[RMDB]
RNA sequence: GGGAACGACUCGAGUAGAGUCGAAAAAGUGAGAACGAUUGUAUGAAUAGGGUAUACCCAAAAUAUACACGAAAGCAUCGUUGUAAAUACAUGAUUUUAGGUGUAUGAUUAGGGUGUAUAUUAAAUGACUUGGGAUGGAGUUCGCUCCAUCCCAAGUAAAAGAAACAACAACAACAAC
Reactivity to DMS in 0.01 (KOAc 150mM, MgCl2 10mM, bicine 150mM(pH8.5), 24C), signal-to-noise 2, nucleotides 027 to 126: a030g040u020g030a110g020a090a070c150g000a060u010u040g010u020a020u000g020a120a080u020a070g000g000g050u000a070u030a020c000c000c000a050a060a110a050u030a020u000a000c010a010c000g000a020a000a020g010c020a040u000c220g000u000u000g040u020a120a130a090u060a000c010a020u000g000a060u000u000u010u000a120g050g020u000g000u000a000u000g000a040u000u000a230g000g020g010u000g010u000a000u000a020u000u040a090a080a070u040g000
Reactivity to 2A3 in 0.01 (KOAc 150mM, MgCl2 10mM, bicine 150mM(pH8.5), 24C), signal-to-noise 2, nucleotides 027 to 126: a000g170u140g030a190g000a080a060c050g060a220u120u010g000u100a120u270g080a100a150u130a080g110g000g000u040a040u020a020c000c000c000a010a000a000a000u060a000u000a000c000a000c000g040a040a000a050g010c010a000u050c100g000u000u030g120u120a070a100a040u250a000c000a000u000g020a020u000u000u000u140a180g140g000u000g010u000a000u000g160a200u020u070a000g000g000g000u000g020u000a000u000a020u040u230a000a000a120u050g020